The record gives the reactivity of an RNA of 177 nucleotides to DMS and 2A3.
The 2A3 profile rests on 3,231 reads.
RNA sequence: GGGAACGACUCGAGUAGAGUCGAAAACGUGCUCUCUUCGGAGAGCACGAAAGAAAGCACAAAGCACCAAAUAAAGGAGGUGCAGGGUGCUACCACCAAUAAAAAGAAGUAGGUUCGCCUACUUCAACAGUGCGUAAUAGUUCGCUAUUACGCACUGAAAAGAAACAACAACAACAAC
Reactivity to DMS in 0.01 (KOAc 150mM, MgCl2 10mM, bicine 150mM(pH8.5), 24C), signal-to-noise 2, nucleotides 027 to 126: c010g010u000g020c020u000c010u000c030u020u000c170g030g010a010g010a020g000c020a000c040g000a020a090a130g000a150a070a050g030c000a020c000a100a110a100g000c010a010c010c000a070a160a130u010a110a170a130g000g000a280g000g000u000g010c010a030g000g000g010u000g010c010u000a040c100c090a160c150c060a090a060u010a030a110a020a130a090g000a010a000g000u000a020g000g010u000u010c230g020c000c000u000a000c000u000u000c010a050a100
Reactivity to 2A3 in 0.01 (KOAc 150mM, MgCl2 10mM, bicine 150mM(pH8.5), 24C), signal-to-noise 2, nucleotides 027 to 126: c010g000u000g010c000u000c010u010c000u010u040c180g070g000a000g000a000g020c000a000c000g010a000a000a000g010a010a040a000g000c010a010c040a030a110a040g000c000a000c000c030a040a040a150u290a140a190a040g180g040a080g050g000u000g000c000a000g010g030g000u010g010c000u020a030c000c030a040c000c040a080a050u150a140a100a020a010a020g020a000a000g010u010a000g020g030u020u060c140g030c090c000u000a000c000u020u000c000a000a010